[RMDB]
RNA sequence: GGGAACGACUCGAGUAGAGUCGAAAAAAAAGAUAUGGACGUGAACUACUUCCGAAAGUGGCUAUGAAGUAAAUUCGGAAACGAAUUUAUGGAGCCACAGAUAGCUGAAGCACGUCCUAAGUCAAAAGAAGUUAUAUACGUUCGCGUAUAUAACUUCAAAAGAAACAACAACAACAAC
Reactivity to DMS in 0.01 (KOAc 150mM, MgCl2 10mM, bicine 150mM(pH8.5), 24C), signal-to-noise 3, nucleotides 027 to 126: a070a030a110a100g010a030u020a160u020g000g000a020c010g030u000g010a080a070c080u020a300c030u000u010c020c030g010a140a160a090g010u000g000g000c000u000a210u000g000a100a240g010u010a000a000a010u000u000c000g010g000a070a020a060c000g010a010a000u010u000u000a000u000g000g010a000g020c000c010a000c000a000g010a060u010a140g020c240u020g000a030a020g000c010a010c010g000u000c000c000u000a030a080g010u010c010a060a060a150a140
Reactivity to 2A3 in 0.01 (KOAc 150mM, MgCl2 10mM, bicine 150mM(pH8.5), 24C), signal-to-noise 3, nucleotides 027 to 126: a030a000a000a010g040a040u050a040u060g000g000a010c000g000u020g030a140a060c090u200a030c020u300u030c020c000g050a080a070a080g010u010g000g000c040u120a300u300g020a000a000g010u010a000a000a010u000u010c010g020g000a020a010a010c000g010a000a000u000u000u000a010u020g020g030a000g010c020c010a000c010a000g030a010u180a040g120c200u100g010a010a000g010c000a010c010g020u010c000c000u000a000a000g000u000c010a010a030a050a150

The record gives the reactivity of an RNA of 177 nucleotides to DMS and 2A3. The RNA was probed in 150 mM KOAc, 10 mM MgCl2 and 150 mM bicine (pH 8.5) at 24 C. Values are in units of 0.01, from 0 to 300, in steps of 10. For 2A3 the reverse transcriptase was SuperScript II with manganese.